[RMDB]
Structure probing data (2A3 and DMS) for a 177-nucleotide construct. 2A3 adducts were read by reverse transcription with SuperScript II with manganese. DMS adducts were read by reverse transcription with MarathonRT. The 2A3 profile rests on 14,290 reads. For DMS, 20,469 sequencing reads were counted. Source: RMDB library OK2TST, as collected in RNAgym.
RNA sequence: GGGAACGACUCGAGUAGAGUCGAAAAUCUCUGGAGGCAGGGACUGAGUCAGAGGAUCACUUGAGCAUAGGGGUUUGAGGCUGCAGUGAGCCAUGAUCCUGCCACUGCUGCAGCCUGAGCAACAGAGCACUAAACAGACUUUCGAGUCUGUUUAGUGAAAAGAAACAACAACAACAAC
Reactivity to 2A3 in 0.01 (KOAc 150mM, MgCl2 10mM, bicine 150mM(pH8.5), 24C), signal-to-noise 6, nucleotides 027 to 126: u010c010u000c000u010g060g040a040g010g050c030a010g060g000g050a080c060u080g040a030g110u070c040a030g040a040g110g030a060u060c030a010c110u070u110g050a020g050c030a060u090a100g040g010g000g010u050u060u160g090a020g000g000c000u010g000c000a010g010u020g110a020g040c020c000a030u110g030a060u050c000c010u020g000c020c000a040c030u040g000c000u000g000c000a000g000c000c010u020g020a030g020c010a000a050c010a040g080a020g060
Reactivity to DMS in 0.01 (KOAc 150mM, MgCl2 10mM, bicine 150mM(pH8.5), 24C), signal-to-noise 9, nucleotides 027 to 126: u000c010u000c010u010g010g010a110g010g010c040a040g010g010g000a090c100u010g010a100g020u010c080a090g010a120g000g010a070u010c060a080c090u000u000g010a090g010c070a090u010a090g010g010g000g020u000u000u010g010a060g010g020c000u000g000c000a010g010u000g000a120g010c060c060a080u010g000a060u000c050c050u000g010c020c040a160c090u000g010c010u000g000c010a020g000c000c010u000g010a070g010c080a050a060c070a100g000a160g010